The data come from the RNA Mapping Database (RMDB), library RNAMAK. Structure probing data (2A3) for a 207-nucleotide construct.
[RMDB]
RNA sequence: GGGAACGACUCGAGUAGAGUCGAAAAGGGGUCCAAGGGUUCGGAGGAAGGGACAUGAGCUGAAGCCUCCACGGCUCAACAGCCCUUCUACCCACCCGAACGCUUGGACGGAGGCACCCAAAACCUUCUUCUCAAGGUUCGCCUUGAGAAGAAGGAACCGAUAGAUUGUCUUCGGACAAUCUAUCGGAAAAGAAACAACAACAACAAC
Reactivity to 2A3 in 0.01 (KOAc 150mM, MgCl2 10mM, bicine 150mM(pH8.5), 24C), signal-to-noise 2, nucleotides 027 to 156: g010g010g010g000u000c010c000a010a000g130g040g000u000u010c000g020g010a070g030g020a020a010g020g000g000a040c040a160u160g000a030g000c010u020g020a100a030g030c000c010u000c010c010a010c010g010g020c000u000c040a030a030c050a080g080c000c010c000u010u010c000u010a050c010c040c050a050c020c000c010g010a010a000c040g060c260u000u000g000g010a000c020g000g000a010g010g000c010a040c000c010c010a010a070a110a150c000c000u000u010c000u000u000c000u000c000a020a000g010g010u050u060c190g080c080c000u000u000g000a000g030a000a000g000a000a000g010g000a000a040